[RMDB]
RNA sequence: GGGAACGACUCGAGUAGAGUCGAAAAAGGCCGCGCAUGGCGAAAAGUGGUCCGGAAGCCAAAAGAGGGUUUUCUGGUGGUCGGCCCGGGCCAGCGCGGUCCGGAGGUCGGCGUUGGUCGCUGCGGCGAAAAGGCGACAGUUCGCUGUCGCCUUUUCAAAAGAAACAACAACAACAAC
Reactivity to 2A3 in 0.01 (KOAc 150mM, MgCl2 10mM, bicine 150mM(pH8.5), 24C), signal-to-noise 2, nucleotides 027 to 126: a000g050g030c000c010g030c010g000c110a200u150g010g040c010g080a000a080a060a060g160u160g030g000u110c050c000g000g000a090a000g000c010c080a000a050a030a190g240a070g070g040g030u270u120u050u050c020u040g000g090u050g080g000u070c000g030g000c030c000c000g010g040g070c000c000a010g040c130g000c090g000g000u000c000c000g040g000a140g040g030u100c030g000g040c060g030u110u150g020g010u020c020g000c020u070g030c030g070g000c010